[RMDB]
RNA sequence: GGGAACGACUCGAGUAGAGUCGAAAAGGUCAUAAUCGAGCUUAGGCGGCUCAAACGACAAAGCUGAAGUAGUCCAUCGACUGCUUUACUACAGGGUCAGGGCAUGGGCGGUUGCACCCAAAAAUGAAAUUAAGCGAGGGAUUUUUCGAGCAGUAACUACUCGUGCAGAGUUCGCUCUGCACGAGUAAAAAGAAACAACAACAACAAC
Reactivity to 2A3 in 0.01 (KOAc 150mM, MgCl2 10mM, bicine 150mM(pH8.5), 24C), signal-to-noise 1, nucleotides 027 to 156: g040g000u030c040a080u070a140a130u070c170g000a030g000c040u060u120a060g100g030c010g040g020c040u070c000a050a190a100c050g000a000c020a020a150a000g020c090u140g010a050a050g000u030a000g030u000c160c060a230u200c250g020a020c000u010g060c000u000u000u000a010c000u020a030c030a030g000g000g010u040c020a020g050g000g020c070a080u080g040g020g000c050g000g020u060u020g000c000a080c010c000c000a120a030a030a000a000u070g030a060a000a040u110u250a040a110g000c020g120a030g020g000g000a000u000u040u100u170u240c070g030a000g000c010a010g080u060a000a140c020